[RMDB]
About this RNA
The record gives the reactivity of an RNA of 177 nucleotides to 2A3 and DMS. High DMS reactivity at an A or C suggests that its Watson-Crick edge is free. 2A3 adducts were read by reverse transcription with SuperScript II with manganese. For 2A3, 1,326 sequencing reads were counted.
RNA sequence: GGGAACGACUCGAGUAGAGUCGAAAAGAGCUGAAGUACAGCAAGAACGACGAAAUCCUUGGCACAGCGUCGAAGAUAAGCGUGCCGACUGCCAAGGAUUAACGGCACGCGAGGCGAAGACGCCAGAACGAUACUGGGUCUUCGGACCCAGUAUCGUAAAAGAAACAACAACAACAAC
Reactivity to 2A3 in 0.01 (KOAc 150mM, MgCl2 10mM, bicine 150mM(pH8.5), 24C), signal-to-noise 2, nucleotides 027 to 126: g200a020g000c000u010g010a070a020g070u080a130c000a000g000c000a000a080g080a170a030c090g110a010c060g010a060a010a130u020c000c000u040u030g000g000c040a040c020a160g070c080g090u080c080g050a060a040g080a090u110a030a080g020c000g000u000g010c000c000g010a060c050u050g060c000c000a050a000g000g040a000u020u070a020a020c000g030g010c000a000c000g000c000g000a000g000g040c000g080a170a040g030a020c080g000c000c000a010g030a030
Reactivity to DMS in 0.01 (KOAc 150mM, MgCl2 10mM, bicine 150mM(pH8.5), 24C), signal-to-noise 2, nucleotides 027 to 126: g020a160g000c000u040g000a200a060g000u000a270c020a000g010c000a180a010g040a110a130c050g020a050c130g050a140a080a000u000c000c000u000u080g000g000c020a130c300a240g000c070g020u000c010g010a100a110g010a060u000a100a080g010c000g060u000g100c000c000g000a080c080u000g000c000c060a110a070g040g000a010u000u000a010a010c160g000g000c000a000c000g010c000g000a150g020g040c080g000a120a110g020a030c130g000c010c080a230g020a110